[RMDB]
RNA sequence: GGGAACGACUCGAGUAGAGUCGAAAACGCUGGGGGGAGCUUGAAAGAUGGAGCUACUGAAGCGCGCACGGUAGCUAUGAAGUCUAUAAGAGCUUUGAUCCCUGUGCUGAAGCGCGCACGGCAACCGAAAGGUGCGAGUUACUACUUCGGUAGUAAAACAUAGCAAACGUUUCGACGUUUGCUAUGUAAAAGAAACAACAACAACAAC
Reactivity to DMS in 0.01 (KOAc 150mM, MgCl2 10mM, bicine 150mM(pH8.5), 24C), signal-to-noise 1, nucleotides 027 to 156: c050g060c110u010g020g000g020g070g000g030a050g020c020u000u000g000a140a070a100g020a050u020g040g010a070g000c000u000a030c050u000g000a050a060g000c040g050c020g040c050a300c030g000g040u000a010g020c000u020a100u000g000a170a230g000u030c020u000a090u020a140a300g000a020g030c040u020u000u000g030a050u000c000c000c030u000g000u000g000c100u000g000a050a080g030c000g020c000g020c010a300c070g010g020c060a150a160c010c000g020a100a180a220g000g020u000g040c040g030a190g000u000u000a040c000u000a000c000u030u010c290g030g000u080a020g010u000a000a040a120
Reactivity to 2A3 in 0.01 (KOAc 150mM, MgCl2 10mM, bicine 150mM(pH8.5), 24C), signal-to-noise 2, nucleotides 027 to 156: c010g000c060u100g000g000g000g000g010g010a000g000c000u000u050g030a090a030a000g010a000u020g020g000a000g010c000u000a000c000u010g010a140a010g000c010g000c010g000c010a000c010g000g020u010a000g000c000u020a290u180g000a000a000g000u000c010u000a040u040a300a020g000a020g000c000u300u090u010g000a000u000c000c000c000u030g030u000g000c000u030g020a110a030g000c000g010c010g000c010a000c010g010g010c000a020a010c010c000g050a140a050a020g000g000u020g030c010g010a060g040u070u030a010c000u000a000c000u050u080c250g110g000u000a000g020u040a030a050a010